[RMDB]
RNA sequence: GGGAACGACUCGAGUAGAGUCGAAAAGAGGGUUUCCUGCGGCCUACGUUCAUCGGUGAGCUGUGGCAAGCGUUCAACGACGACCGGCCCUUGAUCGACGCGUUUGGCACCCCGGGCAAGCUGACCGUCCCAAAUACGAAUUCGUUCGUAUUUGGGAAAAAGAAACAACAACAACAAC
Reactivity to 2A3 in 0.01 (KOAc 150mM, MgCl2 10mM, bicine 150mM(pH8.5), 24C), signal-to-noise 3, nucleotides 027 to 126: g100a010g020g050g010u030u040u050c010c000u020g050c040g050g010c020c020u050a030c050g030u040u080c020a050u100c050g050g050u070g040a050g000c040u030g070u090g110g040c070a050a020g020c020g070u080u110c100a160a060c050g060a010c030g040a070c000c040g040g000c030c000c000u070u090g070a110u060c020g010a040c030g030c010g020u030u120u050g000g000c030a100c000c010c020c030g020g010g000c060a060a040g030c030u050g040a070c010c010g050
Reactivity to DMS in 0.01 (KOAc 150mM, MgCl2 10mM, bicine 150mM(pH8.5), 24C), signal-to-noise 5, nucleotides 027 to 126: g010a100g000g000g010u000u000u010c030c020u000g020c140g010g010c010c010u020a080c090g010u000u010c090a050u000c060g000g010u000g010a070g000c030u000g020u010g020g000c070a070a090g020c040g010u010u000c060a080a120c100g000a070c060g010a090c050c070g000g000c010c010c040u000u010g010a090u000c050g020a070c120g010c050g020u000u010u000g010g010c060a100c050c040c030c030g000g010g000c070a050a080g000c040u010g010a090c040c050g000

Description:
Structure probing data (2A3 and DMS) for a 177-nucleotide construct. 2A3 is a SHAPE reagent: it acylates the 2'-hydroxyl of flexible nucleotides of all four kinds. Reactivities are given for positions 27 through 126. The 2A3 profile rests on 4,522 reads. Conditions: 150 mM KOAc, 10 mM MgCl2 and 150 mM bicine (pH 8.5), 24 C. It was measured as part of the RMDB library OK2TRN. 2A3 adducts were read by reverse transcription with SuperScript II with manganese.